[RMDB]
Overview
The record gives the reactivity of an RNA of 177 nucleotides to DMS and 2A3. The RNA was probed in 150 mM KOAc, 10 mM MgCl2 and 150 mM bicine (pH 8.5) at 24 C.

RNA sequence: GGGAACGACUCGAGUAGAGUCGAAAACUGCAUGUGCGCACCUCAGCCCCUUGUUCCCUCGUGUCGCACCACGGCUAUUACAUCCUGGCUCAAUGCCCACCAGGGGACACGGUUACAGUUGGGUUUAAAUAUACGACCGAUUCGUCGGUCGUAUAUUAAAAGAAACAACAACAACAAC
Reactivity to DMS in 0.01 (KOAc 150mM, MgCl2 10mM, bicine 150mM(pH8.5), 24C), signal-to-noise 2, nucleotides 027 to 126: c090u000g000c070a070u000g000u020g040c040g000c030a070c020c040u010c060a100g000c000c000c000c030u020u060g000u000u000c000c020c000u000c170g020u020g000u020c180g000c050a070c070c050a090c220g000g000c010u000a050u030u000a150c070a070u010c100c100u000g010g000c070u030c130a130a070u000g000c020c020c010a100c030c120a070g020g000g000g000a080c030a040c120g000g000u000u000a020c080a190g020u010u010g020g000g000u000u000u000a060
Reactivity to 2A3 in 0.01 (KOAc 150mM, MgCl2 10mM, bicine 150mM(pH8.5), 24C), signal-to-noise 4, nucleotides 027 to 126: c020u050g030c020a080u110g080u090g090c060g010c050a040c030c000u070c020a010g020c010c000c020c020u000u030g010u030u010c000c000c010u020c010g020u010g030u020c060g030c040a030c030c010a040c050g010g020c010u080a050u120u220a120c050a110u060c000c040u040g000g020c010u010c090a060a120u070g000c000c010c000a000c020c020a000g030g000g000g030a010c010a010c040g040g040u070u140a080c050a080g010u020u000g030g020g000u010u050u060a020